[RMDB]
RNA sequence: GGGAACGACUCGAGUAGAGUCGAAAAGGGGUCGAAAGGGUGAGGUUAAGCUUUUGACGAGCUGAAGCCUCCACGGCUCGAUAAGCUUAACUACCCACCACCACUUUCGACGGAGGCACCCAAAACAGAAUGCCACGAUUCGUCGUGGCAUUCUGAAGUAUAACUUAAGAUUCGUCUUAAGUUAUACAAAAGAAACAACAACAACAAC
Reactivity to 2A3 in 0.01 (KOAc 150mM, MgCl2 10mM, bicine 150mM(pH8.5), 24C), signal-to-noise 8, nucleotides 027 to 156: g130g000g020g010u010c000g010a000a000a000g010g000g000u010g000a020g020g010u000u000a000a000g000c030u080u170u290u290g160a120c080g000a000g000c010u020g020a110a020g010c000c000u010c010c010a000c010g000g000c000u000c000g020a090u080a280a070g000c010u000u000a000a000c000u040a040c060c040c010a010c010c000a000c000c000a300c010u000u000u000c000g000a000c040g000g000a000g000g000c010a020c000c000c010a030a050a000a020c010a000g000a000a000u000g000c000c010a010c010g010a020u060u090c210g020u010c000g000u170g000g000c000a000u000u000c000u000g000a000a000
Reactivity to DMS in 0.01 (KOAc 150mM, MgCl2 10mM, bicine 150mM(pH8.5), 24C), signal-to-noise 3, nucleotides 027 to 156: g020g010g030g060u000c010g000a000a030a040g010g020g040u000g020a210g020g000u000u010a030a010g010c000u010u000u010u010g030a200c150g000a020g030c000u000g000a060a160g020c030c010u000c000c010a300c080g000g010c010u000c000g010a110u000a040a050g030c010u000u010a020a010c010u000a040c010c020c050a300c030c000a020c000c000a150c020u000u010u000c010g000a020c000g020g010a020g070g010c000a100c010c010c020a040a060a100a300c000a010g010a010a020u000g010c010c000a020c000g000a070u000u010c300g050u000c050g010u010g010g020c010a000u000u000c000u000g010a030a160
Source: RMDB library RNAMAK, as collected in RNAgym. Chemical mapping of a 207-nucleotide RNA with 2A3 and DMS. The RNA was probed in 150 mM KOAc, 10 mM MgCl2 and 150 mM bicine (pH 8.5) at 24 C.